[RMDB]
RNA sequence: GGGAACGACUCGAGUAGAGUCGAAAAGUAAGAUGAUUCGUCAUCUUACGAACCCCAUGAAGCGGCACAUACCGAGCUUCAUACAUCUAAGAGUGCAAAUAAUGGCGCGUGGUUUCGACCACGCGAAGAUCACAGAAAUAUUCGUAUUUCUGUGAUCAAAAGAAACAACAACAACAAC
Reactivity to DMS in 0.01 (KOAc 150mM, MgCl2 10mM, bicine 150mM(pH8.5), 24C), signal-to-noise 9, nucleotides 027 to 126: g000u000a000a000g010a010u000g000a030u010u010c200g020u000c000a010u000c000u000u000a000c000g010a070a130c070c000c000c070a050u000g010a020a010g020c020g000g010c060a090c180a100u010a140c060c080g010a120g000c010u000u000c000a020u000a180c190a060u000c100u010a070a090g010a080g010u000g000c090a090a080a080u010a080a080u010g000g010c010g010c010g030u000g000g000u000u000u020c200g000a030c000c000a000c000g010c000g000a020a050
Reactivity to 2A3 in 0.01 (KOAc 150mM, MgCl2 10mM, bicine 150mM(pH8.5), 24C), signal-to-noise 9, nucleotides 027 to 126: g000u000a000a000g000a010u010g010a010u030u070c110g050u010c080a000u000c000u010u000a000c000g000a010a020c010c000c000c000a010u040g010a010a010g000c020g050g000c090a080c020a250u240a090c060c050g040a030g020c000u010u000c000a010u050a050c050a060u070c060u160a120a040g120a060g130u110g060c060a060a080a110u230a100a120u240g220g000c010g000c010g000u000g000g020u020u060u120c200g060a020c000c000a000c000g000c000g000a000a010
Structure probing data (DMS and 2A3) for a 177-nucleotide construct. For DMS, 16,427 sequencing reads were counted. DMS adducts were read by reverse transcription with MarathonRT. The 2A3 profile rests on 34,671 reads. It was measured as part of the RMDB library M2PK50.